Background
Chemical mapping of a 177-nucleotide RNA with DMS and 2A3. For 2A3, 1,051 sequencing reads were counted. Reactivities are rounded to 0.1 and cut off at 0 and 3. The RNA was probed in 150 mM KOAc, 10 mM MgCl2 and 150 mM bicine (pH 8.5) at 24 C. The DMS profile rests on 1,322 reads. Reactivities are given for positions 27 through 126.
[RMDB]
RNA sequence: GGGAACGACUCGAGUAGAGUCGAAAACUGACCAGGUGACAGAGGUGAUGGACUCUCUAGCUCUGCAGCAGACUGCUGGGCAGAGAAGCUUGGGCAGGCCUGGCACUGAGGCCCAGAAGCUUCAUGCGCACUUGAGUUUGUUCGCAAACUCAAGUGCAAAAGAAACAACAACAACAAC
Reactivity to DMS in 0.01 (KOAc 150mM, MgCl2 10mM, bicine 150mM(pH8.5), 24C), signal-to-noise 2, nucleotides 027 to 126: c040u000g000a080c040c000a030g020g010u000g010a170c140a040g000a040g000g020u010g000a140u020g010g010a190c080u000c000u010c030u010a210g000c000u000c040u020g000c000a060g030c210a150g010a110c130u000g010c000u000g000g010g030c000a030g000a050g000a060a180g000c020u000u000g000g000g000c040a080g000g030c020c020u010g020g010c020a040c200u010g000a020g000g000c030c010c030a130g000a100a140g000c010u010u000c030a030u020g020c110
Reactivity to 2A3 in 0.01 (KOAc 150mM, MgCl2 10mM, bicine 150mM(pH8.5), 24C), signal-to-noise 1, nucleotides 027 to 126: c000u030g070a050c020c010a030g030g020u050g110a020c040a060g070a060g000g040u140g080a250u160g050g120a080c020u010c000u000c050u100a070g000c020u010c010u060g000c000a040g000c020a020g120a300c060u080g020c000u000g020g080g110c000a000g010a000g000a020a000g040c030u030u020g040g000g000c040a010g000g030c000c010u010g020g000c020a020c140u020g000a010g030g020c030c000c000a050g090a050a020g010c010u010u020c020a050u080g030c060